[RMDB]
RNA sequence: GGGAACGACUCGAGUAGAGUCGAAAAACGGAUGGUACGCCAUCCGACCAUUGGGUAGAAGCGUUCAAUCAGCACCGUGACGGUGCAGAUGGGAAAUUGCCCAUGAUACGAACCAUACGUGGUGCGAAAAAGCCAUCGGUGUUCGCACCGAUGGCAACGAUUAAUCAGUCUUCGGACUGAUUAAUCGAAAAGAAACAACAACAACAAC
Reactivity to 2A3 in 0.01 (KOAc 150mM, MgCl2 10mM, bicine 150mM(pH8.5), 24C), signal-to-noise 4, nucleotides 027 to 156: a000c010g010g010a000u010g000g010u080a050c230g060c020c000a000u000c000c000g000a010c010c020a090u080u110g010g000g010u060a060g040a120a030g070c050g050u050u050c060a040a060u010c010a020g000c010a010c000c020g140u220g200a140c210g000g000u000g000c010a000g000a010u000g050g010g020a030a110a090u080u040g010c000c000c010a010u060g020a020u050a030c050g040a020a020c020c000a030u070a110c200g090u040g040g020u030g050c040g070a130a050a010a040a030g000c010c000a000u000c000g000g010u020g000u020u070c190g000c110a000c000c020g010a000u010g000g000c000a010a000
Reactivity to DMS in 0.01 (KOAc 150mM, MgCl2 10mM, bicine 150mM(pH8.5), 24C), signal-to-noise 1, nucleotides 027 to 156: a080c040g000g000a110u000g010g020u000a130c120g000c040c020a020u020c010c010g000a050c010c010a090u000u010g030g000g020u000a070g020a100a160g020c090g030u020u000c050a090a040u000c010a170g030c000a010c030c020g000u000g010a150c180g030g020u000g000c000a000g020a020u000g000g020g000a050a270a120u000u000g020c000c000c000a000u010g000a070u000a060c000g000a060a040c020c000a110u000a110c110g020u000g000g000u000g030c020g020a070a110a080a060a120g010c000c000a010u000c020g000g010u010g010u000u030c220g000c030a070c000c000g000a010u000g020g030c000a000a010